The record gives the reactivity of an RNA of 207 nucleotides to DMS and 2A3. Conditions: 150 mM KOAc, 10 mM MgCl2 and 150 mM bicine (pH 8.5), 24 C. Values cover nucleotides 27 to 156. It was measured as part of the RMDB library M2RFPK.
RNA sequence: GGGAACGACUCGAGUAGAGUCGAAAACAACACGUCCUCGUCGUACAGAGUGGUAACAUGUGUCACCACAUAUCCAAGCUUGGGUACACGGGCUUGACCCAACCCCUUCGGCGGAUGGUGGCACAUGAAAAGAAGUAACACUUCGGUGUUACUUCAACAUAUACAGUUAGUUCGCUAACUGUAUAUGAAAAGAAACAACAACAACAAC
Reactivity to DMS in 0.01 (KOAc 150mM, MgCl2 10mM, bicine 150mM(pH8.5), 24C), signal-to-noise 6, nucleotides 027 to 156: c050a100a070c080a110c080g000u010c020c010u000c040g030u000c060g000u000a110c080a100g010a140g030u000g000g010u000a090a130c010a050u000g030u000g010u000c010a030c000c000a020c050a150u000a130u000c010c010a050a150g020c110u000u000g030g010g040u000a110c140a060c070g000g020g030c030u000u000g000a140c020c010c000a070a090c040c010c010c050u000u000c050g030g020c180g000g010a050u000g010g040u000g010g000c010a030c010a010u000g000a020a040a110a110g010a020a010g020u000a010a000c000a020c010u000u000c300g050g000u000g000u000u000a000c000u000u000c000a030a140
Reactivity to 2A3 in 0.01 (KOAc 150mM, MgCl2 10mM, bicine 150mM(pH8.5), 24C), signal-to-noise 9, nucleotides 027 to 156: c050a020a020c030a010c060g100u090c010c020u040c030g160u040c030g050u150a080c070a110g060a020g050u110g040g080u130a090a010c000a000u000g000u000g000u010c000a000c020c020a050c060a140u230a040u080c010c010a080a050g040c100u060u070g010g000g000u010a010c030a010c030g000g000g010c030u230u300g170a300c000c000c020a010a060c000c010c000c000u080u120c050g060g000c020g010g000a020u020g000g000u000g000g000c000a000c000a000u000g000a000a000a000a010g000a000a000g000u000a000a000c010a000c000u040u070c240g090g000u000g000u000u000a000c000u000u000c000a000a000